Source: RMDB library OK2TST, as collected in RNAgym. Structure probing data (DMS and 2A3) for a 177-nucleotide construct. The RNA was probed in 150 mM KOAc, 10 mM MgCl2 and 150 mM bicine (pH 8.5) at 24 C.
[RMDB]
RNA sequence: GGGAACGACUCGAGUAGAGUCGAAAAAGCUAUAGCACUGAUGAUAGGCACAUAUUAUAUGUUGAAAUCCACCAGCCCAGCAUAUAUGCUGGUGACAUUGAUGAUGGCAACUGUGUCAAGAAUGCAGUAACUAUACAAGCUUCGGCUUGUAUAGUUAAAAAGAAACAACAACAACAAC
Reactivity to DMS in 0.01 (KOAc 150mM, MgCl2 10mM, bicine 150mM(pH8.5), 24C), signal-to-noise 6, nucleotides 027 to 126: a100g010c050u000a100u000a110g010c080a100c030u010g010a070u010g010a130u010a070g020g000c020a030c020a060u010a080u000u010a110u010a070u000g000u000u000g000a040a060a070u010c070c050a050c050c010a050g000c070c030c010a020g010c030a060u010a120u010a070u000g010c010u000g000g000u000g010a040c130a090u000u000g010a080u000g010a040u000g000g000c030a030a050c030u000g010u000g010u000c010a080a090g010a100a070u010g010c020a050g010
Reactivity to 2A3 in 0.01 (KOAc 150mM, MgCl2 10mM, bicine 150mM(pH8.5), 24C), signal-to-noise 4, nucleotides 027 to 126: a000g080c090u110a080u130a080g050c060a020c060u020g030a020u020g020a050u070a110g020g010c040a010c020a040u190a090u120u260a120u090a050u220g000u020u020g040a050a060a000u030c030c010a040c010c000a030g000c020c000c010a020g000c060a030u150a020u040a040u280g000c000u010g000g040u040g010a010c010a040u070u160g050a070u060g000a010u030g050g010c010a000a010c020u030g010u000g000u020c010a010a020g090a080a020u140g020c000a020g020